Structure probing data (DMS and 2A3) for a 177-nucleotide construct. For DMS, 780 sequencing reads were counted. It was measured as part of the RMDB library TTRDEL. 2A3 adducts were read by reverse transcription with SuperScript II with manganese.
RNA sequence: GGGAACGACUCGAGUAGAGUCGAAAAGAUAUGGAGCUGACGAUGAGAAUACGUAACAUCGAUUCGGAAACGAAUCGUGGUAUUCGAGUCAACUCCUAAGUCAAACGCCUCGCUUCGGCGAGGCGAACCUCAUCCGUAACUUCGGUUACGGAUGAGGAAAAGAAACAACAACAACAAC
Reactivity to DMS in 0.01 (KOAc 150mM, MgCl2 10mM, bicine 150mM(pH8.5), 24C), signal-to-noise 1, nucleotides 027 to 126: g040a010u000a300u010g000g000a050g070c050u030g010a000c000g030a200u070g090a240g020a010a000u000a000c000g010u000a040a110c150a020u010c010g010a000u000u000c000g010g010a080a010a200c030g010a000a000u000c000g030u000g000g000u030a000u000u000c000g010a170g010u010c000a010a010c000u000c000c000u000a000a140g030u030c010a070a120a260c030g010c000c000u000c020g010c030u000u010c180g060g000c000g010a010g000g020c000g010a010a030
Reactivity to 2A3 in 0.01 (KOAc 150mM, MgCl2 10mM, bicine 150mM(pH8.5), 24C), signal-to-noise 1, nucleotides 027 to 126: g020a000u040a000u110g000g000a000g030c030u010g040a000c060g240a300u280g000a090g020a170a010u020a000c020g080u100a110a050c040a300u300c020g000a000u000u030c020g000g060a090a090a000c020g030a000a000u030c010g020u000g030g010u010a020u020u030c020g020a030g000u010c010a000a010c010u000c000c010u000a210a010g020u030c040a180a020a020c030g000c000c000u030c010g000c040u110u060c300g090g040c020g000a000g000g000c030g010a000a020